Chemical mapping of a 177-nucleotide RNA with 2A3. For 2A3, 290 sequencing reads were counted. The RNA was probed in 150 mM KOAc, 10 mM MgCl2 and 150 mM bicine (pH 8.5) at 24 C.

RNA sequence: GGGAACGACUCGAGUAGAGUCGAAAACGAGGUAAGAACCAACAAAAUAAGCACGCACAAUAAAAACACACAGAACCGGCACAGCUCCUCCUUUUUCAUGGAAGGAUGAGACAGCUGGAGCGUCGGCGUCGGAGUCAGCUUUCGAGCUGACUCCGACAAAAGAAACAACAACAACAAC
Reactivity to 2A3 in 0.01 (KOAc 150mM, MgCl2 10mM, bicine 150mM(pH8.5), 24C), signal-to-noise 1, nucleotides 027 to 126: c030g010a130g120g000u100a030a090g100a150a060c000c000a000a140c010a060a240a060a120u300a000a000g000c000a000c000g000c000a010c160a180a010u210a110a300a000a070a000c070a000c000a000c000a140g070a090a070c000c000g000g020c000a000c000a000g000c000u000c000c000u000c000c000u000u030u090u190u300c110a070u040g140g000a140a000g000g130a000u140g110a060g060a030c100a000g000c000u000g010g000a000g030c030g000u040c000g000g020c040
It was measured as part of the RMDB library OK1LIB.